[RMDB]
RNA sequence: GGGAACGACUCGAGUAGAGUCGAAAACUGACAUAAACAAGAGACGAUCAGAAGCGAUAAAAUUGACAAAAGGAUACUAGUAACAGCCUUAUCCACAGGUAUGUAUGCACCCAGAGUUGAGAACUCAAUGUAAUGAUGUAGUCCCUGUACGUGGCCGCAUCUGUCAUUACUUCGGUAAUGACAGAUGAAAAGAAACAACAACAACAAC
Reactivity to DMS in 0.01 (KOAc 150mM, MgCl2 10mM, bicine 150mM(pH8.5), 24C), signal-to-noise 3, nucleotides 027 to 156: c050u020g010a070c060a080u000a050a110a050c050a100a080g020a130g040a060c090g020a120u000c020a040g020a120a090g020c040g000a110u010a060a030a080a150u000u000g010a090c050a040a090a140a240g000g020a080u000a050c060u010a150g010u000a060a150c040a110g000c010c020u020u000a070u000c130c130a100c100a020g030g020u000a040u000g010u000a050u010g000c020a080c030c000c030a090g030a150g010u000u000g020a050g000a100a090c040u010c030a040a080u000g000u020a110a090u050g000a050u000g030u000a100g020u000c020c020c010u000g050u000a060c100g020u000g030g010c040c050g000
Reactivity to 2A3 in 0.01 (KOAc 150mM, MgCl2 10mM, bicine 150mM(pH8.5), 24C), signal-to-noise 5, nucleotides 027 to 156: c030u020g060a040c030a080u230a060a160a030c050a100a030g030a010g020a030c030g010a050u040c030a030g080a130a030g030c020g040a010u120a070a120a040a080u140u120g040a070c050a020a140a010a000g030g010a010u050a140c050u060a070g070u050a040a030c000a020g010c010c000u020u070a060u060c030c030a030c030a070g020g020u040a100u110g030u010a050u130g030c020a040c000c030c010a000g020a020g060u050u100g080a050g020a070a030c010u010c030a020a050u070g050u120a110a060u090g050a020u080g010u050a030g050u060c010c010c000u020g050u060a050c110g020u040g040g000c000c030g010